RNA sequence: GGGAACGACUCGAGUAGAGUCGAAAAGUCGAUGCGGAAGAGCUUGCUGGCAAGGACGGCAUGAAGCUUUUCGUCUUUGGCACAGAAGAUCACGGCCAGGUCAAUCUGGUGGCGCUUCUCGACAAUAAUUACCAUAAAUCUUCGGAUUUAUGGUAAUAAAAGAAACAACAACAACAAC
Reactivity to 2A3 in 0.01 (KOAc 150mM, MgCl2 10mM, bicine 150mM(pH8.5), 24C), signal-to-noise 9, nucleotides 027 to 126: g000u010c010g010a020u040g000c030g040g060a100a030g030a130g070c000u020u040g020c030u020g020g030c040a080a070g060g040a030c000g000g020c020a050u170g170a100a050g050c030u070u070u040u080c010g030u020c050u040u040u030g070g000c030a020c010a060g010a010a000g000a010u140c100a010c040g010g000c010c000a010g010g040u150c070a050a150u050c040u020g020g020u030g120g060c020g000c000u040u000c010u010c020g030a010c020a000a020u170a110
Reactivity to DMS in 0.01 (KOAc 150mM, MgCl2 10mM, bicine 150mM(pH8.5), 24C), signal-to-noise 9, nucleotides 027 to 126: g010u000c020g010a050u000g010c040g010g000a080a050g000a070g010c010u000u000g010c040u000g010g000c030a090a070g010g010a050c020g000g000c140a130u010g020a110a110g010c090u010u000u010u000c030g010u010c020u000u000u000g010g020c030a200c110a040g000a030a020g000a030u010c090a120c070g000g000c000c000a020g000g000u010c290a100a140u010c010u000g000g010u000g000g010c020g000c020u000u000c070u000c030g010a050c040a080a090u010a070